[RMDB]
RNA sequence: GGGAACGACUCGAGUAGAGUCGAAAAUACUGUUCGCAGUAAACGCUGAUAUGGAGGUAACUGCAGCUGCUCGUUUGACGUGACGUCGGAAACGACGUCACCGAGAGCAGAACUACUGCAGUUUACCUCCUAAGUCCUUGGUCUCAUUCGUGAGAAACGCACAAAAUGUAUUCGUACAUUUUGUGCGAAAAGAAACAACAACAACAAC
Reactivity to DMS in 0.01 (KOAc 150mM, MgCl2 10mM, bicine 150mM(pH8.5), 24C), signal-to-noise 2, nucleotides 027 to 156: u000a040c040u000g000u000u020c180g020c040a080g020u000a030a070a070c060g000c100u000g030a090u000a140u000g000g000a020g010g020u000a010a020c010u000g000c000a010g010c010u000g030c000u000c000g020u000u020u010g020a250c130g030u000g000a000c000g000u000c000g020g000a050a060a190c000g010a000c000g020u000c000a010c000c000g000a300g010a000g010c000a010g000a020a000c030u010a300c000u000g000c020a010g020u000u000u000a010c010c000u000c000c000u000a000a100g000u000c010c080u000u000g010g000u010c000u000c000a060u000u000c190g000u000g000a040g010a050a140a210
Reactivity to 2A3 in 0.01 (KOAc 150mM, MgCl2 10mM, bicine 150mM(pH8.5), 24C), signal-to-noise 2, nucleotides 027 to 156: u040a000c020u010g020u140u150c280g030c040a010g020u100a000a200a050c150g030c100u010g000a010u000a000u010g000g000a000g000g010u010a020a010c000u000g000c000a000g020c000u030g000c000u010c010g150u120u230u200g060a010c010g000u000g000a000c000g000u010c010g000g000a010a010a000c000g010a010c020g000u010c000a000c010c000g080a050g010a000g020c010a000g020a020a000c150u300a040c000u020g000c000a000g000u000u010u000a010c000c000u000c000c000u000a000a000g000u000c000c000u080u230g160g020u000c000u000c010a100u160u130c110g130u170g040a090g030a140a080a040
Background:
Chemical mapping of a 207-nucleotide RNA with DMS and 2A3. For DMS the reverse transcriptase was MarathonRT. 2A3 adducts were read by reverse transcription with SuperScript II with manganese. The RNA was probed in 150 mM KOAc, 10 mM MgCl2 and 150 mM bicine (pH 8.5) at 24 C. Source: RMDB library RNAMAK, as collected in RNAgym.